RNA sequence: GGGAACGACUCGAGUAGAGUCGAAAACUCCAUUGCUUCGGCAAUGGAGAAACAGGACGUGACACCGAAACGGAGGUAGGUCCAACUACCUUCUCACAAAAAAAACGCUUAGGUUCGCCUAAGCGAACAGUUACGUAUCCUUCGGGAUACGUAACUGAAAAGAAACAACAACAACAAC
Reactivity to DMS in 0.01 (KOAc 150mM, MgCl2 10mM, bicine 150mM(pH8.5), 24C), signal-to-noise 3, nucleotides 027 to 126: c020u000c000c000a000u010u000g010c000u010u000c190g030g000c020a000a000u010g000g000a000g010a030a050a100c170a110g020g020a050c130g000u000g000a070c100a140c080c060g040a080a160a090c190g000g010a020g000g020u020a000g000g000u000c150c140a070a220c050u010a020c010c000u000u000c000u000c070a100c120a030a000a010a070a020a110a160a180c000g010c010u000u000a000g010g010u000u000c170g010c000c030u000a000a000g000c000g010a010a050
Reactivity to 2A3 in 0.01 (KOAc 150mM, MgCl2 10mM, bicine 150mM(pH8.5), 24C), signal-to-noise 1, nucleotides 027 to 126: c000u000c000c000a000u010u010g000c000u020u060c190g130g000c000a010a010u010g000g010a000g000a000a000a000c050a030g060g090a040c130g080u090g050a030c040a060c110c060g050a140a080a030c090g000g010a010g020g000u010a000g010g020u040c040c000a040a130c010u010a010c000c000u030u020c020u050c000a060c090a000a040a030a020a020a000a020a060c010g000c010u010u000a000g030g070u050u040c230g040c040c000u010a000a010g000c000g000a010a010
Overview:
An RNA of 177 nucleotides, treated with DMS and 2A3 and read out base by base. Source: RMDB library M2PK50, as collected in RNAgym. DMS adducts were read by reverse transcription with MarathonRT.